[RMDB]
An RNA of 177 nucleotides, treated with 2A3 and DMS and read out base by base.

RNA sequence: GGGAACGACUCGAGUAGAGUCGAAAAAAUGAGCCUACGCAGAGUCUCCGACACUCUCACCGGAGCAGCCGUUACGCUCCCGGUAAUGACUACCACCCGGACUGAACGGAAUUUCGCGGGCAUCGGCGUAAAUCAAGGCUUUCGAGCCUUGAUUUACAAAAGAAACAACAACAACAAC
Reactivity to 2A3 in 0.01 (KOAc 150mM, MgCl2 10mM, bicine 150mM(pH8.5), 24C), signal-to-noise 3, nucleotides 027 to 126: a000a010u160g020a030g020c030c010u050a040c030g060c120a020g030a020g070u040c020u010c040c010g030a030c050a010c080u040c000u010c050a010c010c000g000g030a010g000c050a010g020c020c020g070u080u020a080c140g010c030u040c010c030c000g000g020u060a050a070u140g030a060c030u090a100c020c030a030c010c030c020g020g050a060c080u080g080a100a010c030g070g070a060a040u070u100u080c040g010c000g020g010g000c000a040u100c020g070g000c060
Reactivity to DMS in 0.01 (KOAc 150mM, MgCl2 10mM, bicine 150mM(pH8.5), 24C), signal-to-noise 2, nucleotides 027 to 126: a010a060u020g000a010g020c020c000u010a080c010g010c100a090g000a020g010u040c020u000c010c020g050a020c100a100c080u000c040u010c170a140c000c010g000g010a050g040c040a050g060c060c020g000u000u010a020c060g000c100u010c020c020c070g000g000u010a060a060u020g060a110c050u040a080c160c070a130c120c030c110g010g010a110c100u050g000a020a070c020g040g010a080a080u020u010u000c030g020c100g010g010g010c080a060u000c020g000g020c210

For DMS the reverse transcriptase was MarathonRT. The DMS profile rests on 2,515 reads.